[RMDB]
RNA sequence: GGGAACGACUCGAGUAGAGUCGAAAACUACCUUUAUCGUCUUUUUACUUAUUCAAUGAAGCGAAGCUGGGAUUAAUGUCUCACUUUUUAGUAUUAAAGUCUUAUUCAGGCUCAUUCGGGUUGAAGAUGAUGUGGUUCCAUUCGUGGAACCACAUCAAAAAGAAACAACAACAACAAC
Reactivity to 2A3 in 0.01 (KOAc 150mM, MgCl2 10mM, bicine 150mM(pH8.5), 24C), signal-to-noise 2, nucleotides 027 to 126: c040u130a150c040c070u060u210u210a220u220c190g010u030c000u000u000u090u120u020a110c000u000u050a100u180u160c030a020a180u190g050a030a000g000c000g100a000a000g080c060u010g000g000g000a000u000u160a040a020u270g040u020c020u000c070a010c000u140u160u000u000u070a000g060u020a050u010u130a130a140a000g000u010c000u080u020a090u170u020c020a000g000g070c010u000c010a040u030u030c000g120g000g000u010u020g070a000a010g050a040